[RMDB]
RNA sequence: GGGAACGACUCGAGUAGAGUCGAAAAGAUAUGGACGUACAGCAAGGCCGUGUCGGAAACGACGGCUGAUGACCUGUGACGUCCUAAGUCAAAUCUAGUUAGUACGCUUCGGCGUACUAACUAGAAAUCCUUUCUUCUUGUUCGCAAGAAGAAAGGAAAAAGAAACAACAACAACAAC
Reactivity to DMS in 0.01 (KOAc 150mM, MgCl2 10mM, bicine 150mM(pH8.5), 24C), signal-to-noise 6, nucleotides 027 to 126: g000a040u010a300u010g000g010a000c000g020u000a020c000a000g000c030a070a080g010g020c000c010g010u000g010u000c010g000g000a110a100a160c000g020a050c010g000g000c000u000g020a040u010g000a070c300c000u000g000u000g010a030c010g010u000c000c000u010a020a070g020u010c040a080a120a160u000c000u000a010g000u000u000a000g000u000a000c000g010c000u000u010c210g020g010c010g010u000a000c000u000a000a000c000u000a000g000a010a060a110
Reactivity to 2A3 in 0.01 (KOAc 150mM, MgCl2 10mM, bicine 150mM(pH8.5), 24C), signal-to-noise 3, nucleotides 027 to 126: g030a020u090a040u130g010g000a000c000g000u030a010c010a020g020c050a150a290g040g000c040c010g150u160g190u200c030g010g020a080a080a050c030g030a000c010g010g020c000u020g030a200u140g010a020c010c000u020g030u110g180a030c010g000u000c000c000u010a070a000g010u020c020a000a010a200u000c000u000a000g000u000u000a000g000u000a000c000g000c000u030u060c300g020g000c000g010u010a000c000u000a000a000c000u000a000g000a000a000a000